The record gives the reactivity of an RNA of 207 nucleotides to 2A3 and DMS. 2A3 adducts were read by reverse transcription with SuperScript II with manganese. It was measured as part of the RMDB library OK3TST. For DMS the reverse transcriptase was MarathonRT. The DMS profile rests on 9,456 reads.
RNA sequence: GGGAACGACUCGAGUAGAGUCGAAAAAGUGGCUGUACUAGACCUAGUACACGUACUACUUGAGACUGUAUCAUAGACAUAUGAUACACAGCUUCAUAUGUCUAUGAGGCUGUGUGCAGUCUCAACAAUAGGUCUAUUGUUAAGUAGUACGGCCACGCGAAGCAAGUAUGUUCGCAUACUUGCUUCGAAAAGAAACAACAACAACAAC
Reactivity to 2A3 in 0.01 (KOAc 150mM, MgCl2 10mM, bicine 150mM(pH8.5), 24C), signal-to-noise 9, nucleotides 027 to 156: a000g000u000g000g000c010u010g000u020a000c020u030a040g110a120c030c060u020a020g040u050a020c100a010c120g040u050a030c020u010a010c000u030u040g000a000g000a000c000u000g020u050a110u090c000a000u010a010g090a090c030a060u030a020u020g010a010u060a090c090a010c030a130g050c030u020u000c000a000u010a010u070g100u050c060u040a000u000g000a000g000g000c060u080g030u040g040u050g120c010a000g000u000c000u000c000a010a010c030a020a040u080a020g080g050u040c080u050a090u050u160g100u090u080a100a070g010u020a000g010u000a020c000g000g000c000c000a000c000g000
Reactivity to DMS in 0.01 (KOAc 150mM, MgCl2 10mM, bicine 150mM(pH8.5), 24C), signal-to-noise 3, nucleotides 027 to 156: a130g020u010g010g020c000u010g000u010a020c050u010a010g010a050c040c020u010a090g020u000a090c040a300c070g010u000a050c020u010a050c060u000u000g010a040g010a010c000u000g020u010a100u010c010a020u000a030g000a120c220a110u000a030u000g010a090u010a170c090a070c120a100g000c060u000u010c000a000u000a030u020g000u000c080u000a010u000g010a010g030g010c050u000g000u000g030u000g020c020a030g020u000c000u000c010a070a030c070a080a110u000a020g030g030u010c020u000a110u000u000g000u010u010a110a090g010u000a030g020u000a020c020g030g000c010c000a000c020g010